[RMDB]
RNA sequence: GGGAACGACUCGAGUAGAGUCGAAAAUCGGUGCUGCUUAUUUGAACCUAGUUGCAGAAUGGUCGGUGUAUUAGUGUUGAAUAGGGUAACGCUCUUUUUUGGAACGUGCUGAGGUGAGUGGCAACGAGCCUGGCUGCUUAUUCGUAAGCAGCCAGGCAAAAGAAACAACAACAACAAC
Reactivity to 2A3 in 0.01 (KOAc 150mM, MgCl2 10mM, bicine 150mM(pH8.5), 24C), signal-to-noise 4, nucleotides 027 to 126: u010c000g020g000u020g000c000u000g000c000u050u040a030u010u100u100g080a010a010c020c000u010a050g030u000u030g040c030a000g080a130a110u080g070g080u110c060g040g010u100g040u030a120u050u160a070g050u020g040u140u090g070a090a090u090a150g080g030g000u050a070a020c010g050c010u020c000u000u060u050u030u050u150g040g000a060a000c030g010u030g010c020u020g010a030g020g010u030g000a020g000u020g010g000c000a000a010c000g010a000
Reactivity to DMS in 0.01 (KOAc 150mM, MgCl2 10mM, bicine 150mM(pH8.5), 24C), signal-to-noise 2, nucleotides 027 to 126: u000c000g000g000u000g020c040u000g000c030u020u000a040u000u030u010g010a060a070c030c050u030a040g010u000u030g030c030a050g000a080a060u050g000g030u000c040g000g000u050g000u040a050u000u030a100g050u020g030u020u000g000a070a060u010a090g010g000g020u020a070a080c050g000c030u000c000u000u000u000u010u010u000g000g000a020a050c060g010u000g000c040u000g000a110g000g020u020g000a040g020u000g010g020c000a060a030c060g000a130